Notes:
Chemical mapping of a 177-nucleotide RNA with DMS and 2A3.

[RMDB]
RNA sequence: GGGAACGACUCGAGUAGAGUCGAAAAGAUAUGGACAGUGAUGACCGCUUCCCACGUUGAAAUCGGAAACGAUGGAGUGGGAGCGCAAGCUGUCCUAAGUCAAAACACAUGACUUCGGUCAUGUGAACUUGUUCUAUUACUUCGGUAAUAGAACAAGAAAAGAAACAACAACAACAAC
Reactivity to DMS in 0.01 (KOAc 150mM, MgCl2 10mM, bicine 150mM(pH8.5), 24C), signal-to-noise 9, nucleotides 027 to 126: g010a030u000a300u000g000g010a010c010a010g010u000g010a130u010g000a130c300c020g000c010u010u010c000c000c000a010c000g000u010u020g000a090a100a020u000c000g000g000a130a080a150c000g010a020u000g000g000a100g020u000g000g000g000a030g010c000g010c040a040a240g010c000u000g010u000c000c000u000a010a080g000u010c030a080a060a080a170c000a010c000a000u000g000a020c000u000u010c200g020g000u000c000a000u000g000u000g000a030a110
Reactivity to 2A3 in 0.01 (KOAc 150mM, MgCl2 10mM, bicine 150mM(pH8.5), 24C), signal-to-noise 9, nucleotides 027 to 126: g020a010u070a050u150g000g000a000c000a000g020u040g140a300u180g060a120c090c050g060c020u300u240c010c030c000a000c010g210u300u070g030a030a030a010u010c010g010g040a060a040a040c010g000a010u010g000g010a020g000u010g000g000g000a000g000c000g010c010a120a070g000c000u000g000u000c000c000u000a040a010g010u010c030a030a010a100a090c020a000c000a010u010g000a000c000u040u080c300g070g000u000c000a000u010g000u000g010a010a010
Reactivities are rounded to 0.1 and cut off at 0 and 3.
For DMS, 17,441 sequencing reads were counted.